[RMDB]
RNA sequence: GGGAACGACUCGAGUAGAGUCGAAAAUAACGCCAAUUCUAUCUACGAGCUUUUGGCGUGGCUACAGCGUGCCUUUAAGCAGUUGCUUGACGACUUUGUGGCGUUGGAAAGCGAACUGGAAGACUAUAAGAACGCUUUAACUGAACUCCUAGAGCAAACUAUGAUUCGUAUUCGUACGAAUCAUAGUAAAAGAAACAACAACAACAAC
Reactivity to 2A3 in 0.01 (KOAc 150mM, MgCl2 10mM, bicine 150mM(pH8.5), 24C), signal-to-noise 9, nucleotides 027 to 156: u080a020a010c010g000c010c000a020a030u100u010c030u090a250u060c080u180a100c140g090a050g100c100u050u060u070u040g010g000c000g010u000g010g010c030u040a040c030a020g010c010g050u040g050c030c000u040u050u070a070a030g080c020a010g010u030u030g010c020u020u040g020a020c020g010a020c030u080u160u220g160u220g130g050c050g000u020u020g020g040a050a020a000g010c100g030a030a020c010u010g030g050a100a050g090a090c070u080a120u030a250a050g020a040a010c000g000c000u020u030u030a070a050c040u040g060a040a030c030u020c020c020u050a060g020a020g120c080a120a060
Reactivity to DMS in 0.01 (KOAc 150mM, MgCl2 10mM, bicine 150mM(pH8.5), 24C), signal-to-noise 3, nucleotides 027 to 156: u000a070a040c010g030c010c010a020a070u000u000c020u020a080u020c050u010a150c110g000a090g030c050u000u000u000u000g020g020c010g060u000g020g000c030u000a050c050a040g010c090g030u000g010c010c010u000u010u000a060a090g030c010a140g010u010u010g000c010u000u010g020a200c000g010a050c010u000u010u020g040u010g030g030c060g020u000u000g020g000a100a040a040g010c020g020a060a140c020u000g000g010a080a120g010a160c080u000a140u020a070a090g020a090a170c030g000c010u000u000u010a050a080c050u010g010a080a090c050u000c010c020u000a070g000a120g000c020a080a100